[RMDB]
RNA sequence: GGGAACGACUCGAGUAGAGUCGAAAAGAGUUUAGUUACUUGAGUUUUACCAUGAUUAACAUGAAUGAGAUGGCUCUUAUCUUCAUCGGCAGUUACAGCUACGCUUCGGCCCGGACUGUAUUUGGUGCCUUACGUUCACCUUCGGGUGAACGUAAGGAAAAGAAACAACAACAACAAC
Reactivity to 2A3 in 0.01 (KOAc 150mM, MgCl2 10mM, bicine 150mM(pH8.5), 24C), signal-to-noise 2, nucleotides 027 to 126: g080a020g080u140u110u130a070g040u060u130a030c080u070u090g090a030g070u070u120u090u030a040c000c000a060u230g040a040u240u300a100a170c070a190u110g090a080a060u170g000a010g020a000u110g030g000c000u000c000u000u130a090u030c000u010u000c020a010u020c000g000g000c000a000g070u050u070a040c010a040g000c010u010a040c060g000c040u010u000c030g080g010c000c030c000g000g000a000c040u000g040u090a200u040u080u070g060g040u130g000
Reactivity to DMS in 0.01 (KOAc 150mM, MgCl2 10mM, bicine 150mM(pH8.5), 24C), signal-to-noise 1, nucleotides 027 to 126: g010a080g020u000u010u000a030g000u000u000a010c030u000u000g000a120g020u000u000u050u060a180c040c000a060u020g000a090u000u070a130a260c170a160u000g050a020a020u000g000a060g000a140u010g000g000c010u000c000u000u000a120u000c000u000u000c080a000u000c060g040g040c010a020g010u030u000a080c160a070g000c090u000a020c080g000c050u000u000c120g000g110c040c020c030g000g000a020c140u000g000u000a030u060u000u040g030g010u000g020